Annotation: The record gives the reactivity of an RNA of 207 nucleotides to 2A3 and DMS. The 2A3 profile rests on 1,844 reads. Reactivities are given for positions 27 through 156. For DMS the reverse transcriptase was MarathonRT.

[RMDB]
RNA sequence: GGGAACGACUCGAGUAGAGUCGAAAACAGCAUUUGGGCUUGCUUAGGAGUUGCUGUCCUUGUGGCCUAGGCUGCCUUUAAGGUUAUUUGGGGCCCCAGAGCACUUUACUGAAACUCAAGUUUUCACCACUGGUAUGGGCUAUUUCCUCUGAGGGAAGGCAUAUAUGAGUUUCGACUCAUAUAUGCCAAAAGAAACAACAACAACAAC
Reactivity to 2A3 in 0.01 (KOAc 150mM, MgCl2 10mM, bicine 150mM(pH8.5), 24C), signal-to-noise 3, nucleotides 027 to 156: c020a000g060c020a040u030u070u130g020g010g000c050u120u130g010c020u070u110a010g010g040a020g030u070u080g080c040u040g000u120c030c020u060u080g060u070g050g010c000c000u010a040g030g000c020u000g000c020c030u110u110u130a100a050g030g020u120u000a130u110u170u140g050g000g020g010c020c020c010c010a030g020a010g040c030a030c040u090u110u160a090c060u080g070a050a050a020c040u060c120a120a070g010u020u010u060u090c060a050c020c000a040c090u040g010g030u060a090u050g020g000g030c010u050a090u040u060u000c010c000u020c060u070g040a110g010g050g020a040a060
Reactivity to DMS in 0.01 (KOAc 150mM, MgCl2 10mM, bicine 150mM(pH8.5), 24C), signal-to-noise 2, nucleotides 027 to 156: c030a060g030c020a180u010u000u000g020g020g010c010u000u000g040c020u000u000a070g020g030a170g000u000u000g020c050u010g000u000c030c040u000u000g050u000g010g030c010c030u000a070g000g060c000u010g000c010c030u010u000u000a060a090g010g020u010u000a110u010u000u010g020g020g020g030c030c040c000c020a140g010a090g010c050a100c110u010u020u000a140c060u010g020a060a040a080c050u000c030a050a130g010u000u000u010u010c040a100c010c020a100c050u010g020g000u000a120u010g000g000g030c020u010a070u000u000u000c010c010u000c080u000g010a110g030g010g000a150a110
Background: 2A3 adducts were read by reverse transcription with SuperScript II with manganese.